Annotation
An RNA of 177 nucleotides, treated with DMS and 2A3 and read out base by base. The DMS profile rests on 8,046 reads. The 2A3 profile rests on 20,005 reads. 2A3 adducts were read by reverse transcription with SuperScript II with manganese. Conditions: 150 mM KOAc, 10 mM MgCl2 and 150 mM bicine (pH 8.5), 24 C.
RNA sequence: GGGAACGACUCGAGUAGAGUCGAAAAGAUAUGGAUCGCGAUGGGAGACGCGAUCGGAAACGAUCGACCCGUCUGUGAACAUCCGAUCCUAAGUCAAAAGUUAAAAUUCGUUCGCGAAUUUUAACAACCUAUCUCUUAUCUUCGGAUAAGAGAUAGGAAAAGAAACAACAACAACAAC
Reactivity to DMS in 0.01 (KOAc 150mM, MgCl2 10mM, bicine 150mM(pH8.5), 24C), signal-to-noise 7, nucleotides 027 to 126: g010a020u000a030u010g000g000a010u000c000g000c290g010a020u000g010g000g010a010g010a030c010g030c020g000a000u000c000g010g000a020a010a030c000g010a010u000c010g010a300c300c300c220g000u000c000u010g000u000g000a280a250c010a010u000c010c000g000a010u000c000c000u000a000a050g000u000c020a110a070a160a160g000u000u000a000a000a030a010u000u000c000g030u000u020c280g020c010g010a010a000u000u000u000u010a000a010c010a070a160
Reactivity to 2A3 in 0.01 (KOAc 150mM, MgCl2 10mM, bicine 150mM(pH8.5), 24C), signal-to-noise 5, nucleotides 027 to 126: g000a000u010a010u060g000g000a010u010c010g030c200g030a000u010g000g000g010a030g000a010c010g000c000g090a000u000c000g000g010a010a010a000c010g000a010u010c000g060a220c130c170c080g010u000c000u150g300u020g020a010a000c000a010u000c000c000g000a000u000c000c000u000a000a000g000u000c000a040a030a100a160g000u000u010a000a000a010a020u000u010c000g030u020u110c300g000c010g200a010a010u010u010u010u020a020a000c010a010a020